Description
The record gives the reactivity of an RNA of 177 nucleotides to 2A3 and DMS. DMS adducts were read by reverse transcription with MarathonRT. The RNA was probed in 150 mM KOAc, 10 mM MgCl2 and 150 mM bicine (pH 8.5) at 24 C. For 2A3 the reverse transcriptase was SuperScript II with manganese. The DMS profile rests on 7,907 reads. The 2A3 profile rests on 13,986 reads.
[RMDB]
RNA sequence: GGGAACGACUCGAGUAGAGUCGAAAAGAUAUGGACUAGCUUUUGACGGAGGGUAUCGGAAACGAUACGAUUCUCCGAUAAGCUAAGUCCUAAGUCAAAUCAACCAGUCCUUCGGGACUGGUUGAAAGUGAAGUAUCAAGUUCGCUUGAUACUUCACAAAAGAAACAACAACAACAAC
Reactivity to 2A3 in 0.01 (KOAc 150mM, MgCl2 10mM, bicine 150mM(pH8.5), 24C), signal-to-noise 3, nucleotides 027 to 126: g010a010u040a020u070g000g000a000c010u000a000g030c020u130u090u130u300g300a220c080g000g010a000g000g070g000u000a000u000c000g000g000a060a010a010c010g000a000u020a020c030g160a230u280u040c010u000c000c020g030a000u010a010a010g000c010u060a100a080g000u000c000c000u010a030a000g010u000c020a040a020a220u030c000a000a000c000c000a000g000u000c010c010u050u120c280g040g010g010a000c000u000g000g000u000u010g000a000a000a000
Reactivity to DMS in 0.01 (KOAc 150mM, MgCl2 10mM, bicine 150mM(pH8.5), 24C), signal-to-noise 5, nucleotides 027 to 126: g010a030u000a170u010g000g000a010c000u000a030g000c000u000u000u010u010g000a190c110g020g000a010g010g010g010u000a000u000c000g010g000a070a050a110c000g000a010u000a000c000g010a160u000u010c000u000c000c000g010a050u000a010a010g000c000u000a030a060g010u000c000c000u000a010a060g000u000c020a100a110a200u010c010a010a010c000c000a010g000u000c000c000u000u020c200g040g010g000a020c000u000g000g000u000u000g010a010a040a100